[RMDB]
RNA sequence: GGGAACGACUCGAGUAGAGUCGAAAAGUGAAGAUCAUCCGUUGGCAUCACUGCUGCCGUGCGAUAACGUCUUUGCCAUCGAAAGCCGCUGGUAUCGCGAUAACCCUCUGGUGAUCCGCGGACCUGACACGUCGUAUCGAUUCGUCGAUACGACGUGAAAAGAAACAACAACAACAAC
Reactivity to DMS in 0.01 (KOAc 150mM, MgCl2 10mM, bicine 150mM(pH8.5), 24C), signal-to-noise 2, nucleotides 027 to 126: g000u010g000a070a080g000a050u000c070a100u000c050c030g000u000u010g020g000c100a040u000c110a120c140u000g010c200u010g000c020c030g020u010g010c020g000a030u010a020a080c300g000u000c010u000u000u000g010c010c070a080u000c140g000a050a090a090g000c010c010g060c110u000g030g000u000a020u000c030g050c040g000a090u000a140a150c080c030c100u000c110u000g000g020u000g000a010u000c040c000g010c000g000g010a070c030c010u000g000a220
Reactivity to 2A3 in 0.01 (KOAc 150mM, MgCl2 10mM, bicine 150mM(pH8.5), 24C), signal-to-noise 2, nucleotides 027 to 126: g030u030g070a070a010g020a110u060c000a050u030c040c040g010u060u200g040g000c040a020u010c010a010c190u100g000c030u030g000c040c000g060u080g010c030g040a040u030a120a050c030g040u000c020u010u060u040g030c030c010a120u070c080g070a140a060a020g050c000c010g000c030u050g070g010u050a020u150c010g020c020g040a010u050a100a080c020c010c000u140c100u150g040g010u030g020a020u010c030c000g010c020g030g010a000c010c000u020g030a010